[RMDB]
Structure probing data (2A3 and DMS) for a 177-nucleotide construct.
It was measured as part of the RMDB library OK1LIB.
The DMS profile rests on 38,709 reads.
2A3 adducts were read by reverse transcription with SuperScript II with manganese.
The reactions ran in a buffer of 150 mM KOAc, 10 mM MgCl2 and 150 mM bicine (pH 8.5), at 24 C.
For 2A3, 32,967 sequencing reads were counted.
For DMS the reverse transcriptase was MarathonRT.
RNA sequence: GGGAACGACUCGAGUAGAGUCGAAAAUGACGGUACACUCAUGGUAGAGCGGUUUGUGUCUUUGGCUAUAGAUGCUUACCCUCUCACAAAGCAUGAAGAUAUAGAAUACCAGAAUGUAUUCUGGGUCGAAUUAGAGCUAAUUCGUUAGCUCUAAUUCAAAAGAAACAACAACAACAAC
Reactivity to 2A3 in 0.01 (KOAc 150mM, MgCl2 10mM, bicine 150mM(pH8.5), 24C), signal-to-noise 9, nucleotides 027 to 126: u150g040a020c050g050g050u150a040c060a020c040u020c010a020u040g080g060u140a010g010a010g040c130g010g010u010u010u020g020u010g010u000c000u060u070u070g130g000c030u040a030u060a230g010a010u020g000c000u000u020a030c010c010c000u000c000u010c010a040c030a040a190a020g110c020a010u040g050a120a040g080a030u110a010u060a180g160a130a060u110a150c000c010a020g040a050a040u200g060u240a210u070u000c010u000g020g010g030u070c060
Reactivity to DMS in 0.01 (KOAc 150mM, MgCl2 10mM, bicine 150mM(pH8.5), 24C), signal-to-noise 9, nucleotides 027 to 126: u020g000a110c080g010g010u010a060c140a140c080u010c010a010u000g000g010u040a010g000a030g010c280g020g000u000u000u000g000u000g010u000c000u000u010u020g010g020c150u030a080u030a010g010a020u000g010c000u000u000a010c010c000c000u000c000u000c080a100c110a100a120a130g020c020a020u010g000a050a060g010a160u020a090u020a060g000a080a070u020a060c000c080a060g010a080a070u030g010u020a080u010u000c000u000g000g000g010u030c130